[RMDB]
RNA sequence: GGGAACGACUCGAGUAGAGUCGAAAAGAUAUGGACCCGAGUGGACAUGCUCGGGAUCGGAAACGAUCCCAAGAGCAACAGCCACGAGGGUCCUAAGUCAAAAGUAGCGCACUUCGGUGCGCUACAACCAAUAGUCUAGCUUCGGCUAGACUAUUGGAAAAGAAACAACAACAACAAC
Reactivity to DMS in 0.01 (KOAc 150mM, MgCl2 10mM, bicine 150mM(pH8.5), 24C), signal-to-noise 3, nucleotides 027 to 126: g000a020u000a140u010g000g000a030c000c000c000g000a300g010u010g000g000a050c090a090u000g020c000u000c000g010g000g000a000u000c000g000g010a040a030a070c020g010a020u000c000c010c020a070a190g020a000g010c000a140a160c190a120g000c010c000a000c000g000a300g000g000g020u010c000c000u000a000a040g000u000c010a100a130a140a110g010u000a000g020c000g030c000a000c000u000u010c250g020g000u000g000c010g000c000u010a000c000a030a170
Reactivity to 2A3 in 0.01 (KOAc 150mM, MgCl2 10mM, bicine 150mM(pH8.5), 24C), signal-to-noise 2, nucleotides 027 to 126: g010a010u040a000u080g000g000a000c030c000c000g010a050g030u020g000g070a180c240a300u270g000c000u000c000g000g000g000a000u020c000g020g020a020a020a020c010g000a000u020c010c000c030a050a090g010a000g000c000a060a110c120a120g000c000c000a000c000g000a020g030g010g000u000c000c020u000a000a000g000u000c000a000a000a020a120g000u010a010g020c010g000c020a020c040u080u140c300g090g010u020g000c000g010c010u010a000c010a000a010